The record gives the reactivity of an RNA of 177 nucleotides to DMS and 2A3.
RNA sequence: GGGAACGACUCGAGUAGAGUCGAAAAUUAGGACUGGUGUUAUCAGCCUUAGGCUUGACGCUCACUAGCACUAUUGUUAUAUCUAUUUGUAUUAGUGUAGAACAGGUCAAAUUACGACAGUGUGUGGCGCCUUAGCCUCAUUCGUGAGGCUAAGGCGAAAAGAAACAACAACAACAAC
Reactivity to DMS in 0.01 (KOAc 150mM, MgCl2 10mM, bicine 150mM(pH8.5), 24C), signal-to-noise 2, nucleotides 027 to 126: u000u050a040g010g030a070c010u010g000g020u000g020u010u010a120u000c020a030g020c010c020u010u000a120g000g010c030u000u020g000a060c180g030c040u000c000a000c010u000a080g020c090a020c020u000a060u020u000g000u000u010a100u010a090u010c040u000a090u000u000u010g010u000a050u000u010a030g060u000g000u010a010g030a090a120c040a070g000g010u000c040a060a070a130u000u000a060c130g000a060c090a050g010u010g000u010g060u000g010g010
Reactivity to 2A3 in 0.01 (KOAc 150mM, MgCl2 10mM, bicine 150mM(pH8.5), 24C), signal-to-noise 1, nucleotides 027 to 126: u130u080a000g030g060a120c030u030g000g000u140g090u270u120a070u140c030a000g000c000c000u040u030a060g040g020c020u000u000g020a020c070g000c040u080c060a010c020u020a020g030c000a010c030u020a020u090u060g080u080u090a150u010a090u300c040u040a060u070u290u060g020u000a100u070u060a000g010u010g120u080a030g000a030a000c000a000g000g000u000c000a000a000a150u210u090a040c090g050a040c010a010g050u020g020u010g010u020g200g000